This 177-nucleotide RNA was probed chemically with 2A3 and DMS. The data come from the RNA Mapping Database (RMDB), library RFMREP. Values cover nucleotides 27 to 126. The 2A3 profile rests on 12,881 reads. The reactions ran in a buffer of 150 mM KOAc, 10 mM MgCl2 and 150 mM bicine (pH 8.5), at 24 C. 2A3 is a SHAPE reagent: it acylates the 2'-hydroxyl of flexible nucleotides of all four kinds. High DMS reactivity at an A or C suggests that its Watson-Crick edge is free. For 2A3 the reverse transcriptase was SuperScript II with manganese.
[RMDB]
RNA sequence: GGGAACGACUCGAGUAGAGUCGAAAACCAUGCCUUCGGGCAUGGAAAAAGGUGAUGAGCACUCUCGAACCUGACGGGCAGGAUGAUGAGCGGAUUCCUGGCUGAUAAAGGAGUACUUCGGUACUCCCCUUGUAACCAAGUUCGCUUGGUUACAAGGAAAAGAAACAACAACAACAAC
Reactivity to 2A3 in 0.01 (KOAc 150mM, MgCl2 10mM, bicine 150mM(pH8.5), 24C), signal-to-noise 7, nucleotides 027 to 126: c000c000a000u000g000c000c010u060u090c270g110g000g020c000a000u020g000g090a060a050a000a000a030g080g000u080g010a160u120g010a050g030c100a040c170u170c000u010c050g030a050a030c010c010u020g030a030c020g010g000g030c010a000g020g020a030u050g020a030u100g050a050g100c060g030g020a020u020u030c000c000u030g050g060c010u040g050a140u120a160a130a020g000g000a000g000u010a000c010u020u060c160g040g000u000a000c000u020c010c010
Reactivity to DMS in 0.01 (KOAc 150mM, MgCl2 10mM, bicine 150mM(pH8.5), 24C), signal-to-noise 4, nucleotides 027 to 126: c010c000a010u000g010c010c000u000u000c250g030g010g020c000a000u000g000g000a010a050a060a080a050g000g020u010g010a140u010g000a090g010c180a070c240u000c010u000c030g020a120a080c010c000u010g010a200c110g010g000g010c020a040g010g010a050u010g000a130u020g010a080g010c110g010g000a200u000u010c020c010u000g010g000c060u000g010a130u000a030a120a150g020g000a010g010u000a010c000u000u010c140g020g000u000a000c000u000c000c000